[RMDB]
Chemical mapping of a 177-nucleotide RNA with 2A3 and DMS.
In probing experiments dimethyl sulfate is read out at A N1 and C N3, which are open when not base-paired.
The DMS profile rests on 13,009 reads.
The reactions ran in a buffer of 150 mM KOAc, 10 mM MgCl2 and 150 mM bicine (pH 8.5), at 24 C.
For DMS the reverse transcriptase was MarathonRT.
RNA sequence: GGGAACGACUCGAGUAGAGUCGAAAAGACAGUACCUUCCGGACGUGCAGGUGCUGGCCCGACUGCGCGUGGUGGAGGGGGACCAGGCGUUUGAGGUGUUGGCCCCAUUCGUGGUCGACGGCGGACCUACUACUUACGAGUUCGCUCGUAAGUAGUAAAAAGAAACAACAACAACAAC
Reactivity to 2A3 in 0.01 (KOAc 150mM, MgCl2 10mM, bicine 150mM(pH8.5), 24C), signal-to-noise 3, nucleotides 027 to 126: g030a000c020a000g030u070a070c010c000u040u000c050c040g150g090a130c090g080u170g000c020a000g000g030u040g060c030u020g020g020c000c000c000g040a040c040u060g000c000g000c040g080u030g020g150u050g020g080a070g030g020g000g020g020a030c020c000a020g060g030c020g020u040u090u180g070a060g000g070u090g040u100u060g070g000c000c020c010c000a080u110u090c070g040u050g000g030u020c000g000a020c020g010g030c030g030g000a030c000c000
Reactivity to DMS in 0.01 (KOAc 150mM, MgCl2 10mM, bicine 150mM(pH8.5), 24C), signal-to-noise 6, nucleotides 027 to 126: g010a160c060a040g010u000a080c010c000u010u000c010c020g020g010a090c110g020u010g020c090a010g010g010u010g010c010u000g010g000c010c010c020g000a110c070u000g000c030g020c020g020u000g010g000u010g010g010a070g010g010g000g010g010a090c030c040a100g000g000c040g000u000u010u000g010a130g010g010u010g020u000u000g010g000c020c010c010c050a140u010u000c080g010u010g020g010u000c010g010a070c060g000g010c060g000g000a100c060c030